Conditions: 150 mM KOAc, 10 mM MgCl2 and 150 mM bicine (pH 8.5), 24 C. This 207-nucleotide RNA was probed chemically with DMS and 2A3.

[RMDB]
RNA sequence: GGGAACGACUCGAGUAGAGUCGAAAAGAACUUUGGCCGGUUCGGAAUAGAAUCAGGGGGUGCAAACUGCCCACUGGCAGAAAGGAUUAUAGCAAAUGCGUACCCUAUUGCAAUACAGCCCGGCCAACAUAGACUACUCUAUUCGUAGAGUAGUCAACAAUAUAGAUAGAUUCGUCUAUCUAUAUUGAAAAGAAACAACAACAACAAC
Reactivity to DMS in 0.01 (KOAc 150mM, MgCl2 10mM, bicine 150mM(pH8.5), 24C), signal-to-noise 3, nucleotides 027 to 156: g020a070a110c030u000u000u000g050g010c010c020g010g020u000u000c070g010g010a160a160u000a070g000a110a090u000c060a020g030g000g000g040g000u020g010c030a060a060a230c090u000g000c000c000c080a160c090u020g010g000c030a060g010a280a120a080g010g010a120u010u000a090u000a160g040c050a080a080a120u000g000c020g010u000a140c000c010c010u010a150u000u000g020c020a090a130u000a080c050a140g020c240c020c000g050g000c000c010a050a040c140a080u010a080g000a050c000u000a030c000u010c000u000a040u000u000c220g000u000a010g010a040g020u000a010g000u000c010a020a070
Reactivity to 2A3 in 0.01 (KOAc 150mM, MgCl2 10mM, bicine 150mM(pH8.5), 24C), signal-to-noise 5, nucleotides 027 to 156: g020a060a020c030u060u020u010g000g000c000c000g040g000u070u120c070g030g030a080a100u190a110g060a060a050u140c070a080g020g000g010g000g010u080g010c020a080a080a050c020u020g010c000c010c030a140c150u160g020g000c010a000g050a070a090a030g090g040a060u140u120a100u230a170g040c060a040a080a080u100g000c020g040u090a080c000c000c000u030a090u030u120g040c050a020a060u070a180c040a050g010c000c000c000g000g000c010c000a010a000c010a010u090a030g000a000c000u000a000c010u000c000u010a030u050u100c130g100u070a000g000a000g000u000a000g000u000c000a000a000
It was measured as part of the RMDB library M2RFPK. For DMS the reverse transcriptase was MarathonRT. Values cover nucleotides 27 to 156. 2A3 adducts were read by reverse transcription with SuperScript II with manganese. The 2A3 profile rests on 3,538 reads.